[RMDB]
Notes: Chemical mapping of a 207-nucleotide RNA with DMS. Reactivities are given for positions 27 through 156.
RNA sequence: GGGAACGACUCGAGUAGAGUCGAAAAGGGUUUGAGCCAUCGCCCGAAUAUGAUGGGUGAUACAAGUCGCCAUUGUACGCGACGUAGUACGUACUCAUUAGUGCGAAAGCACGGUUAGUCCGACUAGGCAGGGACGAUCUUCUGUCAAUACUUAGAAAGCCAGGAUAAAUUUCGAUUUAUCCUGGCUAAAAGAAACAACAACAACAAC
Reactivity to DMS in 0.01 (KOAc 150mM, MgCl2 10mM, bicine 150mM(pH8.5), 24C), signal-to-noise 1, nucleotides 027 to 156: g020g000g020u000u000u000g000a080g020c030c030a060u020c020g020c010c000c000g040a080a110u010a040u010g020a040u000g010g020g010u000g000a050u000a090c160a120a140g050u000c000g010c010c010a110u010u000g020u010a150c160g030c030g000a010c020g000u000a090g000u000a000c040g050u010a060c010u020c030a020u010u000a040g060u000g040c000g020a080a050a240g000c010a030c030g000g040u020u010a100g000u000c000c040g010a110c080u000a040g020g030c070a080g000g020g010a020c000g000a110u000c070u000u000c050u000g030u000c070a040a140u000a120c050u020u000a130g020a090a140